About this RNA:
Source: RMDB library OK3TST, as collected in RNAgym. The record gives the reactivity of an RNA of 207 nucleotides to DMS and 2A3. Values cover nucleotides 27 to 156. The 2A3 profile rests on 589 reads.
RNA sequence: GGGAACGACUCGAGUAGAGUCGAAAAUAUGCUCAAAAUGUUAAUGCUUCUCUCAUAGGAUUGACUCAUUUAAUAGUAUCAACUUAAUGAUACUAACUUAUUAGAAGCAUUGAUCAAUCCUGAAUUUCUUCCUUUGUGCGGUGUUUAGGUGGGGAAGUCACAGCGGAUAAUUCGUUAUCCGCUGUGAAAAAGAAACAACAACAACAAC
Reactivity to DMS in 0.01 (KOAc 150mM, MgCl2 10mM, bicine 150mM(pH8.5), 24C), signal-to-noise 1, nucleotides 027 to 156: u010a050u000g040c040u010c060a040a090a140a070u000g000u000u000a060a130u000g010c030u000u000c000u000c070u000c070a150u000a070g020g010a040u000u000g010a020c050u010c080a080u000u000u000a070a160u010a020g020u000a010u020c010a010a200c130u010u010a110a250u040g000a020u000a010c020u000a010a070c100u000u000a080u010u010a100g020a050a070g030c100a030u000u000g010a020u000c080a050a010u010c040c000u000g000a050a060u000u000u000c040u000u000c040c050u000u020u000g010u010g050c040g050g000u020g040u010u000u010a070g030g010u010g010g010g070g020a070a130g010
Reactivity to 2A3 in 0.01 (KOAc 150mM, MgCl2 10mM, bicine 150mM(pH8.5), 24C), signal-to-noise 1, nucleotides 027 to 156: u150a030u090g060c000u040c130a090a130a080a150u170g020u080u070a120a040u070g020c000u070u030c060u000c000u000c070a060u130a070g000g010a010u030u100g000a050c010u010c080a020u090u100u180a080a120u030a020g000u010a010u000c010a020a070c080u070u260a000a210u260g000a010u000a000c000u000a010a040c020u050u140a010u000u070a060g000a040a000g000c000a000u000u060g000a010u040c020a060a000u010c030c000u010g060a030a040u090u040u030c020u060u060c000c010u000u130u060g040u060g060c030g020g100u040g000u070u090u060a060g020g010u000g020g020g000g020a020a000g030